[RMDB]
RNA sequence: GGGAACGACUCGAGUAGAGUCGAAAAACGAGUCGUACGCGACUCGAAUGGUCUUGUCGGCGUAAAAGAACAAGACGUCACCGGACGCGACCGGGCUAAAAAGCGAAACGUCAUCUACGGAUGACGAAAAACGGACCUGGGUUCGCCCAGGUCCGAACAGUUACGAAAUGUUCGCAUUUCGUAACUGAAAAGAAACAACAACAACAAC
Reactivity to DMS in 0.01 (KOAc 150mM, MgCl2 10mM, bicine 150mM(pH8.5), 24C), signal-to-noise 2, nucleotides 027 to 156: a160c010g040a030g030u000c000g000u000a100c170g060c050g000a030c010u000c000g000a020a080u020g030g010u020c010u000u000g000u000c070g050g020c160g020u000a080a070a120a190g010a090a070c020a010a030g030a060c030g000u010c060a100c010c000g000g030a090c050g070c100g000a130c020c010g000g000g060c150u000a040a070a050a100a100g030c000g000a180a060a220c000g010u000c000a020u010c010u000a230c270g160g000a000u000g000a020c000g000a010a010a050a080a060c010g030g000a040c000c000u000g000g060g030u000u030c300g010c050c000c000a020g000g000u010c010c010g010a000a020
Reactivity to 2A3 in 0.01 (KOAc 150mM, MgCl2 10mM, bicine 150mM(pH8.5), 24C), signal-to-noise 4, nucleotides 027 to 156: a010c020g000a010g010u000c010g010u060a050c250g000c000g120a000c000u010c000g000a020a080u100g050g000u000c010u000u040g010u020c020g070g150c110g160u220a090a120a030a060g040a050a020c020a020a000g020a010c000g020u030c010a040c010c010g010g010a020c010g000c000g030a010c000c010g000g020g000c050u050a010a010a000a000a030g000c010g050a130a010a010c010g020u000c000a000u010c000u010a040c190g090g000a000u000g000a000c000g020a050a010a000a000a000c010g010g000a000c000c000u010g010g020g010u020u050c120g090c000c000c000a000g000g010u000c000c000g000a000a000